[RMDB]
RNA sequence: GGGAACGACUCGAGUAGAGUCGAAAAGCUCUCUUCGGAGAGCGGUAAAGCGUACUACAGGGUCACAGCUUCUUUGAUCCUACCCACCUCUCCCAAAUAGGAGAGAGGGGGAGAAGCUGAAGUCCCUGUAUCGCCAAUAGGAGCGUUCGCGCUCCAAGAUAACUAGUCCUUUCGAGGACUAGUUAUCAAAAGAAACAACAACAACAAC
Reactivity to 2A3 in 0.01 (KOAc 150mM, MgCl2 10mM, bicine 150mM(pH8.5), 24C), signal-to-noise 5, nucleotides 027 to 156: g010c000u010c000u000c010u030u050c110g040g000a000g000a000g000c010g000g000u030a020a010a010g010c010g030u060a060c050u000a000c060a000g030g010g000u020c040a030c000a100g000c000u010u010c020u180u170u150g170a220u200c020c030u080a210c040c000c050a300c040c000u000c010u030c000c010c020a110a300a140u290a170g020g020a090g000a000g000a010g070g000g010g000g010a020g000a000a000g000c000u020g020a120a020g050u010c000c000c000u000g000u000a010u060c010g000c020c020a030a050u100a170g010g000a000g000c030g000u120u150c280g020c000g040c140u000c000c010a000a010
Reactivity to DMS in 0.01 (KOAc 150mM, MgCl2 10mM, bicine 150mM(pH8.5), 24C), signal-to-noise 1, nucleotides 027 to 156: g000c000u000c000u000c000u010u000c300g040g010a010g010a020g040c000g000g040u000a050a140a070g000c000g030u000a060c090u010a030c030a070g000g010g000u010c020a300c020a030g000c010u000u000c010u000u010u010g020a070u000c010c080u000a120c030c000c010a070c040c000u010c000u000c000c000c020a080a180a300u000a030g000g000a070g010a030g030a070g020g000g010g020g000a040g000a010a030g000c000u000g010a020a100g000u010c010c000c010u000g000u000a000u000c010g050c010c030a120a150u010a060g000g010a020g000c010g000u000u000c080g060c000g000c000u000c000c000a020a250